Chemical mapping of a 177-nucleotide RNA with DMS and 2A3. The DMS profile rests on 1,325 reads. For DMS the reverse transcriptase was MarathonRT. Reactivities are given for positions 27 through 126. The 2A3 profile rests on 1,240 reads. Conditions: 150 mM KOAc, 10 mM MgCl2 and 150 mM bicine (pH 8.5), 24 C.
RNA sequence: GGGAACGACUCGAGUAGAGUCGAAAACUACAACGGAUCGGUGCCGUGGCGUUGGCGGUCGACACCGUUCCGGAGUCCGUCCGCCGUCAGGUGAUCGCCCAGCGCUUGCCGUCGCACGACUGGCCGGCCAGGAAUGCACUUUCGAGUGCAUUCCUGGAAAAGAAACAACAACAACAAC
Reactivity to DMS in 0.01 (KOAc 150mM, MgCl2 10mM, bicine 150mM(pH8.5), 24C), signal-to-noise 1, nucleotides 027 to 126: c020u000a070c120a080a180c040g050g000a020u000c010g030g020u010g000c030c020g020u020g020g020c030g000u000u000g010g030c040g000g010u000c020g010a030c020a020c010c010g010u000u000c090c010g050g010a110g000u020c070c080g000u010c020c010g020c020c030g030u010c090a080g000g010u000g000a030u010c020g000c050c020c040a100g000c020g020c040u000u020g030c030c020g000u010c100g030c100a060c090g000a090c060u000g030g010c030c030g010g000
Reactivity to 2A3 in 0.01 (KOAc 150mM, MgCl2 10mM, bicine 150mM(pH8.5), 24C), signal-to-noise 1, nucleotides 027 to 126: c030u130a080c030a150a040c040g080g040a100u100c000g000g000u040g010c030c010g000u010g060g000c020g010u080u220g040g020c000g020g070u020c000g020a020c020a010c010c000g070u270u130c120c100g000g010a020g020u060c060c060g000u010c000c000g000c040c020g000u060c040a010g000g080u040g000a080u080c030g020c010c050c000a080g050c020g000c030u070u100g080c050c020g050u060c060g000c010a080c030g100a060c010u060g030g000c040c000g000g020